About this RNA:
Chemical mapping of a 177-nucleotide RNA with DMS and 2A3. Values cover nucleotides 27 to 126. The RNA was probed in 150 mM KOAc, 10 mM MgCl2 and 150 mM bicine (pH 8.5) at 24 C. For DMS, 2,787 sequencing reads were counted. 2A3 is a SHAPE reagent: it acylates the 2'-hydroxyl of flexible nucleotides of all four kinds.

[RMDB]
RNA sequence: GGGAACGACUCGAGUAGAGUCGAAAACGUCAGAAGACGAAGUCGGUCCAUCUGCGGUAACAGACCGACAUAGAGUUCGAAGCAGAACGAACAACCGCAGAAACACGAUUGGAGUGUGAAUGAGAGAAUAUGACCAGGAGUUCGCUCCUGGUCAUAUAAAAGAAACAACAACAACAAC
Reactivity to DMS in 0.01 (KOAc 150mM, MgCl2 10mM, bicine 150mM(pH8.5), 24C), signal-to-noise 3, nucleotides 027 to 126: c040g030u020c030a100g030a080a050g010a040c020g010a190a130g000u000c020g070g000u020c000c240a110u020c010u000g000c000g000g010u000a040a090c190a150g000a000c030c000g030a000c020a070u020a120g000a110g000u010u000c000g010a130a120g040c200a170g010a040a060c000g000a050a020c010a220a040c010c010g020c010a050g010a110a180a020c060a020c050g000a140u020u010g010g000a110g030u000g000u010g020a100a040u000g010a110g000a140g000a060
Reactivity to 2A3 in 0.01 (KOAc 150mM, MgCl2 10mM, bicine 150mM(pH8.5), 24C), signal-to-noise 2, nucleotides 027 to 126: c000g000u000c050a110g000a300a020g080a290c000g000a120a000g000u000c000g010g000u000c000c050a140u040c050u030g000c000g030g000u040a010a000c000a120g000a000c000c000g000a000c000a010u000a000g070a000g000u060u000c000g000a000a000g130c160a130g090a010a120c060g020a010a030c000a000a000c030c000g000c000a000g000a000a040a000c110a000c030g140a230u200u300g100g000a050g010u070g010u140g040a150a080u160g000a010g000a000g090a190